This 207-nucleotide RNA was probed chemically with 2A3. Source: RMDB library M2RFPK, as collected in RNAgym.
[RMDB]
RNA sequence: GGGAACGACUCGAGUAGAGUCGAAAAGUGAAAGCUCCUUCUCUCGCAAUGUGUAACUCAUGAUUCUCAUGACCCCUGGUUGGAGAGAUCCGGACUAGGAGCCAGGGGGACUCUGAUUCUGCCAGCCAAAACUGUCGUAAGUUCGCUUACGACAGAAUCCAUCCUUACACUUCGGUGUAAGGAUGGAAAAAGAAACAACAACAACAAC
Reactivity to 2A3 in 0.01 (KOAc 150mM, MgCl2 10mM, bicine 150mM(pH8.5), 24C), signal-to-noise 1, nucleotides 027 to 156: g090u060g020a100a040a000g020c010u020c010c000u050u000c030u000c000u010c010g010c070a020a160u130g070u030g000u070a080a040c010u020c070a070u150g040a110u140u000c060u020c050a040u130g030a080c000c000c000c000u000g010g060u000u080g040g010a080g030a030g020a080u000c080c080g010g040a050c040u070a060g040g000a000g020c000c000a000g000g000g010g000g000a020c020u000c020u060g030a100u110u010c000u040g010c020c000a030g040c010c040a000a060a130a150c020u000g000u000c000g000u000a000a000g000u010u110c170g020c130u000u020a000c000g000a000c000a000g000a000a000
The RNA was probed in 150 mM KOAc, 10 mM MgCl2 and 150 mM bicine (pH 8.5) at 24 C. Values are in units of 0.01, from 0 to 300, in steps of 10. For 2A3 the reverse transcriptase was SuperScript II with manganese.